Chemical mapping of a 207-nucleotide RNA with 2A3. The reactions ran in a buffer of 150 mM KOAc, 10 mM MgCl2 and 150 mM bicine (pH 8.5), at 24 C.
[RMDB]
RNA sequence: GGGAACGACUCGAGUAGAGUCGAAAAGGGGUCACCAUCGAUCGGUCGACGCUGAUGACCCAUGCUGAAGCCUCCACGGCAUGGCAAGGCGAAGACCGGGAGGUGACGGAGGCACCCAAAACAGCAUGCACUCUGGUUCGCCAGAGUGCAUGCUGAACCUACUUGGAUGGUUCGCCAUCCAAGUAGGAAAAGAAACAACAACAACAAC
Reactivity to 2A3 in 0.01 (KOAc 150mM, MgCl2 10mM, bicine 150mM(pH8.5), 24C), signal-to-noise 1, nucleotides 027 to 156: g040g020g040g050u060c020a030c020c000a100u300c010g000a020u010c010g000g000u000c010g030a040c000g010c000u010g010a300u000g000a010c000c000c000a000u000g010c000u050g000a170a030g000c000c000u000c000c000a020c010g000g020c010a000u000g000g010c030a040a270g000g000c000g020a020a010g000a000c000c000g000g000g010a020g000g000u000g020a010c040g000g000a000g010g010c010a040c010c010c000a030a090a010a000c000a000g030c000a000u020g000c000a010c000u000c000u000g000g180u100u160c300g030c030c000a000g000a000g000u030g000c000a000u010g000c000u010g000a000a000